[RMDB]
Background:
Chemical mapping of a 207-nucleotide RNA with DMS and 2A3. The RNA was probed in 150 mM KOAc, 10 mM MgCl2 and 150 mM bicine (pH 8.5) at 24 C. For DMS, 11,933 sequencing reads were counted. It was measured as part of the RMDB library OK3TST. For 2A3 the reverse transcriptase was SuperScript II with manganese.
RNA sequence: GGGAACGACUCGAGUAGAGUCGAAAAACGCCAUCCGAAACGUACGAACGUACGGAAACCAUCCUUCCGUGCGGUAGACAACAGCCUGCGUGAGAAGCACUUGCAUGCGAAAGGAUGGCAACAUGACAGAGGAUGGGAAAGCAUGCGAAUGCGUUCGAACCUUUCUAUGAUUCGUCAUAGAAAGGUUAAAAGAAACAACAACAACAAC
Reactivity to DMS in 0.01 (KOAc 150mM, MgCl2 10mM, bicine 150mM(pH8.5), 24C), signal-to-noise 4, nucleotides 027 to 156: a090c090g000c000c000a020u010c010c020g010a080a090a090c060g050u000a110c050g020a100a090c070g030u010a010c010g000g000a050a060a100c030c020a020u000c030c010u000u010c010c010g030u000g020c020g060g000u000a090g000a130c090a080a090c060a090g010c030c030u000g000c030g010u000g020a200g000a160a180g010c030a030c030u000u000g010c020a090u000g000c030g010a070a100a190g010g020a020u000g000g010c000a030a020c060a080u000g020a160c080a120g010a110g000g000a030u000g010g020g000a080a080a120g020c020a040u000g020c070g000a130a070u000g000c020g010u000u010c020g010
Reactivity to 2A3 in 0.01 (KOAc 150mM, MgCl2 10mM, bicine 150mM(pH8.5), 24C), signal-to-noise 6, nucleotides 027 to 156: a000c070g010c010c000a000u010c000c010g070a140a080a080c050g030u110a040c050g060a250a020c040g020u010a000c010g020g010a010a030a020c000c000a010u000c000c000u020u000c000c000g000u010g020c020g040g000u040a040g040a040c060a060a020c010a070g040c010c050u080g000c020g040u070g040a130g030a080a020g060c010a030c040u090u170g010c010a020u040g000c020g070a090a000a020g000g000a000u000g010g020c000a000a000c010a010u030g030a010c010a010g090a010g040g000a010u000g000g000g020a060a020a000g020c010a000u040g030c040g030a100a020u050g020c060g050u020u080c030g030